[RMDB]
RNA sequence: GGGAACGACUCGAGUAGAGUCGAAAAGAUAUGGACGUCUUUGGUAGGGAGAAUCGUGGGUCGGAAACGACCCACAUUCGAGGAUCUACGACGUCCUAAGUCAAAGUGUACCGUUCGCGGUACACAAGGAUAGUUAGCUGUUCGCAGCUAACUAUCCAAAAGAAACAACAACAACAAC
Reactivity to 2A3 in 0.01 (KOAc 150mM, MgCl2 10mM, bicine 150mM(pH8.5), 24C), signal-to-noise 2, nucleotides 027 to 126: g010a000u040a030u100g000g010a010c020g000u010c070u250u300u300g190g020u040a020g040g020g020a060g000a040a000u040c210g000u020g020g000g000u000c000g010g000a020a010a010c000g010a000c000c000c000a000c000a000u000u000c010g060a180g000g010a000u000c000u010a000c020g000a000c000g000u000c010c000u010a030a000g010u010c060a230a060a070g020u020g000u000a020c040c000g000u020u090c300g020c000g120g010u010a000c010a000c000a010a010
Reactivity to DMS in 0.01 (KOAc 150mM, MgCl2 10mM, bicine 150mM(pH8.5), 24C), signal-to-noise 2, nucleotides 027 to 126: g000a010u010a220u020g000g010a000c000g010u000c000u000u010u030g020g000u010a020g000g000g010a090g010a020a010u000c300g020u000g020g020g010u000c010g000g000a050a030a100c000g020a010c010c000c000a000c010a000u000u000c000g000a160g030g000a040u010c010u000a010c030g000a020c000g000u000c000c000u000a010a090g010u000c020a130a100a210g010u000g000u000a000c010c000g030u000u010c190g030c010g020g010u000a000c000a010c000a050a100